[RMDB]
Background
The record gives the reactivity of an RNA of 177 nucleotides to 2A3 and DMS. For DMS the reverse transcriptase was MarathonRT.

RNA sequence: GGGAACGACUCGAGUAGAGUCGAAAAGCGAUAACCUCGGGAAACUGAGGCCAAUAGCGGAUAUCACUCUCAUGCUGGAGUGCAGAGAGUGAGAAACGUUCCGGCGCUGUAGGAUGUGGCUGCGGCCAUACUGUUGUCUUUUCGAAGACAACAGUAUAAAAGAAACAACAACAACAAC
Reactivity to 2A3 in 0.01 (KOAc 150mM, MgCl2 10mM, bicine 150mM(pH8.5), 24C), signal-to-noise 9, nucleotides 027 to 126: g020c010g010a020u040a080a040c000c000u000c000g010g010g010a030a040a040c020u020g000a010g020g020c010c000a110a090u120a040g060c010g000g000a020u030a010u060c000a000c000u000c000u000c050a280u040g000c020u140g110g300a290g090u150g010c000a000g000a000g000a000g000u010g000a000g000a010a090a010c070g040u050u010c020c010g020g010c030g000c010u030g040u100a050g050g130a120u130g040u050g060g000c010u020g030c080g090g000c000c000
Reactivity to DMS in 0.01 (KOAc 150mM, MgCl2 10mM, bicine 150mM(pH8.5), 24C), signal-to-noise 9, nucleotides 027 to 126: g010c020g010a070u010a220a300c010c000u000c000g010g010g000a100a100a160c010u000g000a020g000g020c020c030a090a100u020a090g010c010g000g000a100u010a130u000c000a000c000u000c000u000c000a090u010g020c010u000g020g030a150g010u020g000c010a020g000a010g010a020g010u000g000a010g000a040a080a090c070g000u000u000c040c030g010g010c030g010c010u000g010u010a080g000g000a110u010g010u000g000g000c010u000g010c070g020g000c020c050
The reactions ran in a buffer of 150 mM KOAc, 10 mM MgCl2 and 150 mM bicine (pH 8.5), at 24 C. It was measured as part of the RMDB libraries RFM100 and RFMREP.